[RMDB]
RNA sequence: GGGAACGACUCGAGUAGAGUCGAAAACGUGUUGAACCGCCUGAGCGAUAUUUUCCUGAACUUCAGUAAAGCACAGCGCCUUCCAAAUAUCCAUGAGGGAACAAUCAACUCUCCACACACCAUGCAACUCACCCACUCACUUCGGUGAGUGGGUGAGAAAAGAAACAACAACAACAAC
Reactivity to 2A3 in 0.01 (KOAc 150mM, MgCl2 10mM, bicine 150mM(pH8.5), 24C), signal-to-noise 1, nucleotides 027 to 126: c010g000u080g050u080u190g060a080a000c070c000g000c000c000u000g030a030g040c150g080a050u010a040u250u030u000u050c000c000u040g110a270a220c000u170u150c120a000g030u050a000a090a000g000c020a000c070a210g060c000g080c000c020u000u010c010c000a010a020a020u040a040u070c160c110a020u300g010a050g000g040g060a080a040c000a000a000u050c030a000a050c020u000c000u040c080c000a000c040a000c000a000c020c020a050u000g000c010a080a230

Source: RMDB library OK1LIB, as collected in RNAgym.
Structure probing data (2A3) for a 177-nucleotide construct.
The 2A3 profile rests on 392 reads.
Conditions: 150 mM KOAc, 10 mM MgCl2 and 150 mM bicine (pH 8.5), 24 C.